[RMDB]
RNA sequence: GGGAACGACUCGAGUAGAGUCGAAAAUCUUAGGAGUUCGCUCCUAAGAAAAGGGCGAGGCCGUGCCAGCUCUUCGGAGCAAUACUCGGCCAGUCACUCUGAAUGCGCUACCCUUCGGGGUAGCGAACUUGCUUAAGAACUUCGGUUCUUAAGCAAGAAAAGAAACAACAACAACAAC
Reactivity to DMS in 0.01 (KOAc 150mM, MgCl2 10mM, bicine 150mM(pH8.5), 24C), signal-to-noise 3, nucleotides 027 to 126: u000c000u000u000a000g000g000a000g000u010u010c260g030c020u000c010c000u000a000a010g000a010a040a110a070g000g010g010c000g010a130g000g010c010c000g020u000g000c070c190a300g010c000u000c000u000u010c160g030g000a010g000c000a070a100u010a120c050u000c000g000g000c000c000a070g000u000c040a060c040u000c030u000g010a100a130u010g000c000g000c000u000a000c000c000c000u000u010c240g020g000g000g010u000a000g000c000g000a000a040
Reactivity to 2A3 in 0.01 (KOAc 150mM, MgCl2 10mM, bicine 150mM(pH8.5), 24C), signal-to-noise 3, nucleotides 027 to 126: u010c010u020u010a010g010g000a010g020u070u070c110g130c110u020c000c000u000a000a000g010a030a020a000a000g040g000g000c010g040a220g020g000c010c010g020u020g010c050c060a050g010c020u000c000u040u040c240g170g010a000g000c000a000a020u050a060c020u000c010g030g010c000c000a010g030u010c020a040c050u050c040u090g170a220a070u170g030c000g000c010u010a000c000c000c000u010u030c230g040g000g000g000u000a000g010c000g010a000a000

An RNA of 177 nucleotides, treated with DMS and 2A3 and read out base by base.
For DMS, 3,471 sequencing reads were counted.
The 2A3 profile rests on 4,440 reads.
The data come from the RNA Mapping Database (RMDB), library M2PK50.